Structure probing data (DMS and 2A3) for a 177-nucleotide construct. DMS adducts were read by reverse transcription with MarathonRT. For 2A3, 3,528 sequencing reads were counted. Values cover nucleotides 27 to 126. The reactions ran in a buffer of 150 mM KOAc, 10 mM MgCl2 and 150 mM bicine (pH 8.5), at 24 C.
[RMDB]
RNA sequence: GGGAACGACUCGAGUAGAGUCGAAAAAUGGCGAAUGGGACCCAGAACUCUCUCUAGAUUCCGAUAGAGAAUCGAGAGAAAACUGGCUCUCCCUUAGCCAUCCGAGGUGGACGUACGUCCUCCUUCGCUCAUACUUGUGGUUCGCCACAAGUAUGAGAAAAGAAACAACAACAACAAC
Reactivity to DMS in 0.01 (KOAc 150mM, MgCl2 10mM, bicine 150mM(pH8.5), 24C), signal-to-noise 2, nucleotides 027 to 126: a030u000g010g020c000g000a220a080u000g000g030g030a020c280c000c000a010g010a070a280c230u000c010u000c000u000c000u000a170g010a020u010u000c000c000g000a160u010a130g000a130g000a020a010u000c000g000a010g010a010g000a020a020a040a190c030u000g000g000c020u000c080u000c000c000c000u000u000a260g010c000c000a000u000c040c010g020a020g010g000u000g000g000a000c010g010u000a070c220g010u000c000c000u000c010c000u010u020c090g030
Reactivity to 2A3 in 0.01 (KOAc 150mM, MgCl2 10mM, bicine 150mM(pH8.5), 24C), signal-to-noise 3, nucleotides 027 to 126: a000u020g010g000c010g000a040a030u030g000g000g000a030c020c020c020a020g030a060a070c020u020c000u020c010u010c030u110a110g000a020u020u000c000c040g240a300u180a200g280a020g000a060a010u010c020g000a000g000a000g000a030a030a010a010c010u010g000g000c000u000c000u000c020c000c010u000u010a000g000c000c000a000u000c010c010g010a000g020g020u020g000g010a020c060g110u300a030c230g010u100c010c000u020c010c000u040u040c040g010